[RMDB]
RNA sequence: GGGAACGACUCGAGUAGAGUCGAAAAGAUAUGGACUAAACGAAUCUGUACCCUCGAAGAACUCGGAAACGAGGGAGAGGCGUACAGACUAUUUAGUCCUAAGUCAAAAGGUCGCUUCGGCGACCAAGACGUAUCUUCUCUUCGGAGAAGAUACGUCAAAAGAAACAACAACAACAAC
Reactivity to 2A3 in 0.01 (KOAc 150mM, MgCl2 10mM, bicine 150mM(pH8.5), 24C), signal-to-noise 1, nucleotides 027 to 126: g030a030u100a030u120g000g000a000c010u020a020a000a020c050g140a150a300u000c000u000g000u000a000c000c000c000u000c000g300a300a100g000a060a000c010u000c030g000g030a100a040a070c000g000a010g000g020g000a020g000a010g030g030c130g020u010a010c020a000g010a000c000u000a010u000u000u000a010g000u000c010c010u010a050a020g030u000c020a020a030a070a140g020g000u000c000g000c020u030u150c300g160g040c000g010a000c000c000a010a000
Reactivity to DMS in 0.01 (KOAc 150mM, MgCl2 10mM, bicine 150mM(pH8.5), 24C), signal-to-noise 1, nucleotides 027 to 126: g040a090u000a300u000g010g010a010c000u010a000a000a000c130g030a080a060u000c000u010g000u030a010c030c000c000u000c000g000a070a170g000a040a250c000u000c000g000g000a070a110a150c030g000a010g010g010g000a020g000a010g010g010c300g010u000a000c000a020g000a000c040u010a120u000u000u000a020g020u020c000c000u000a010a150g000u000c000a020a120a090a130g020g010u000c000g020c010u000u000c120g020g030c010g020a000c010c000a040a010